This 207-nucleotide RNA was probed chemically with DMS and 2A3. High 2A3 reactivity points to a flexible backbone, as in loops and unpaired stretches. DMS adducts were read by reverse transcription with MarathonRT. Source: RMDB library M2RFOK, as collected in RNAgym. For DMS, 5,153 sequencing reads were counted.

RNA sequence: GGGAACGACUCGAGUAGAGUCGAAAAAUCAGAGGGCGCUAUCAUGCAAACUAGGAUUGUCUGCUCAUGCACAGAACCAACCACCGAUAACUAACAGUGCAUGAAGGUUAGUUAUUCCAUAUUAAUUAAAACUCGUAAUUCUUCGGAAUUACGAGAACCGUAAAUAUAUGUUCGCAUAUAUUUACGGAAAAGAAACAACAACAACAAC
Reactivity to DMS in 0.01 (KOAc 150mM, MgCl2 10mM, bicine 150mM(pH8.5), 24C), signal-to-noise 3, nucleotides 027 to 156: a090u000c040a130g000a150g000g010g020c230g020c070u000a070u000c070a070u060g010c070a090a180a150c070u000a130g030g010a150u010u000g010u000c040u000g010c000u000c050a070u000g030c000a070c000a090g000a070a130c020c060a060a100c050c030a240c030c060g010a080u000a020a060c020u000a030a060c020a080g030u000g030c000a080u000g010a060a120g010g000u010u010a010g010u010u000a030u000u010c060c020a120u000a090u010u000a010a140u010u000a060a040a060a150c000u000c010g010u000a000a000u000u000c010u000u000c300g030g000a030a010u000u000a000c000g010a020g010a000a020
Reactivity to 2A3 in 0.01 (KOAc 150mM, MgCl2 10mM, bicine 150mM(pH8.5), 24C), signal-to-noise 9, nucleotides 027 to 156: a000u040c030a020g010a030g050g040g000c020g010c040u090a110u300c090a070u280g010c020a010a020a030c020u040a030g010g040a040u030u050g040u060c040u070g030c000u000c010a010u010g010c000a010c010a030g060a120a070c050c040a050a060c030c040a080c020c070g030a010u000a010a000c000u000a000a000c010a040g020u010g040c000a000u010g030a030a020g060g000u000u000a010g000u010u010a020u100u040c030c000a070u120a080u260u210a170a080u110u130a070a080a060a070c000u000c000g000u000a000a000u000u000c000u010u020c080g090g000a000a000u000u000a000c000g000a000g000a000a010